[RMDB]
The data come from the RNA Mapping Database (RMDB), library OK2TRN. Structure probing data (DMS) for a 177-nucleotide construct. The DMS profile rests on 1,060 reads. Conditions: 150 mM KOAc, 10 mM MgCl2 and 150 mM bicine (pH 8.5), 24 C. For DMS the reverse transcriptase was MarathonRT.
RNA sequence: GGGAACGACUCGAGUAGAGUCGAAAACACUCGCCGUGGUCGUGGCGGCGGCGCUCGCCUCGCUGGUCGGCAUCACCGGCACCGGCACGGCGCACGCGGGCGGUUGUCCCGCGGUCGCGAACUUCGCCCAGACAUCAUCCUUCGGGAUGAUGUCUGGAAAAGAAACAACAACAACAAC
Reactivity to DMS in 0.01 (KOAc 150mM, MgCl2 10mM, bicine 150mM(pH8.5), 24C), signal-to-noise 1, nucleotides 027 to 126: c150a120c070u000c060g000c080c030g020u020g040g060u010c200g020u000g000g000c050g010g030c050g050g000c080g000c050u000c160g010c020c030u000c240g030c080u000g000g000u000c070g010g010c140a030u000c080a060c050c060g000g050c030a160c070c020g000g010c000a080c020g030g000c000g000c210a020c090g000c000g010g000g010c020g020g000u000u000g000u020c000c000c010g030c000g000g000u030c040g010c010g000a050a120c120u000u000c050g050c090